[RMDB]
Structure probing data (DMS and 2A3) for a 207-nucleotide construct. Conditions: 150 mM KOAc, 10 mM MgCl2 and 150 mM bicine (pH 8.5), 24 C. The 2A3 profile rests on 1,278 reads. Values are in units of 0.01, from 0 to 300, in steps of 10. For DMS, 3,932 sequencing reads were counted.
RNA sequence: GGGAACGACUCGAGUAGAGUCGAAAAUUUCAACUCUCUAAGAGGGAAUAUAUUCCCUCCUUAUGGCCCAUAAGUGUUUAUUCAAGGUAUAUCAUAUACAACAGAUCUUUAUGCCUGUUUACUUUGGGGAAGAAGUGAAGAUAGUUCAAGGAGAAAAGCGCUAUAAAUGAUUCGUCAUUUAUAGCGCAAAAGAAACAACAACAACAAC
Reactivity to DMS in 0.01 (KOAc 150mM, MgCl2 10mM, bicine 150mM(pH8.5), 24C), signal-to-noise 2, nucleotides 027 to 156: u000u000u000c020a050a110c040u000c020u010c010u020a070a070g000a070g010g010g010a040a070u000a090u010a170u000u000c010c000c000u000c000c050u000u000a080u000g000g020c010c020c020a090u000a060a140g030u000g020u000u000u000a120u000u000c050a060a040g040g010u000a010u000a040u000c030a060u000a250u000a100c100a070a110c100a120g000a030u000c040u000u000u000a050u030g010c010c000u000g000u000u000u000a030c060u000u000u000g040g020g030g000a070a050g010a060a030g020u010g020a070a080g000a140u000a080g010u000u000c050a070a110g000g010a150g000a120a020a180a210
Reactivity to 2A3 in 0.01 (KOAc 150mM, MgCl2 10mM, bicine 150mM(pH8.5), 24C), signal-to-noise 3, nucleotides 027 to 156: u050u040u050c020a050a060c000u020c000u020c050u150a120a030g000a020g060g030g020a070a020u230a010u040a100u240u070c010c010c020u020c040c000u070u020a070u080g090g030c010c000c010a020u070a080a030g020u040g130u140u170u110a040u040u080c100a080a010g040g000u020a030u020a010u060c050a050u120a020u080a300c080a120a050c030a170g170a160u030c050u070u130u020a040u060g000c000c000u020g030u000u050u030a010c020u000u060u070g010g000g040g020a000a040g020a010a000g010u040g030a020a030g040a060u100a040g020u070u090c060a070a010g090g010a030g030a040a170a070a010